Description: An RNA of 177 nucleotides, treated with DMS and 2A3 and read out base by base. The 2A3 profile rests on 1,926 reads. It was measured as part of the RMDB library OK2TST. The DMS profile rests on 1,886 reads. High 2A3 reactivity points to a flexible backbone, as in loops and unpaired stretches.
RNA sequence: GGGAACGACUCGAGUAGAGUCGAAAAGCCAUGUCAUGCUGUGUGGUAACCCACAAAUGGUGCGUGAUACCCAGCAAUUACUGAAAGAACAGCGCGAAAUGCGUAAACAUCUGCGCCGUAAACCGGAUGCAUAAUGCUCAUUCGUGAGCAUUAUGCAAAAAGAAACAACAACAACAAC
Reactivity to DMS in 0.01 (KOAc 150mM, MgCl2 10mM, bicine 150mM(pH8.5), 24C), signal-to-noise 3, nucleotides 027 to 126: g000c000c050a130u000g000u000c080a070u000g000c060u030g010u000g020u010g000g000u000a120a120c190c000c020a040c070a030a060a070u000g020g040u010g000c090g020u000g010a170u010a110c030c040c010a090g000c090a080a120u010u000a080c100u000g000a080a090a060g010a110a030c100a060g000c000g020c000g010a070a140a100u020g000c010g000u000a060a070a170c080a060u000c050u010g030c010g010c020c020g020u010a080a100a060c080c080g010g000a300
Reactivity to 2A3 in 0.01 (KOAc 150mM, MgCl2 10mM, bicine 150mM(pH8.5), 24C), signal-to-noise 2, nucleotides 027 to 126: g000c030c020a050u090g060u060c020a010u040g020c030u000g020u020g000u020g130g000u060a140a120c020c120c000a010c030a010a150a040u270g050g020u040g040c030g060u050g010a060u040a040c000c060c010a010g000c040a060a030u190u050a060c050u110g090a100a070a000g040a060a010c040a060g000c020g000c000g030a190a180a020u170g020c030g030u130a120a040a030c010a010u010c010u070g010c020g000c010c020g060u090a080a000a030c060c020g020g040a020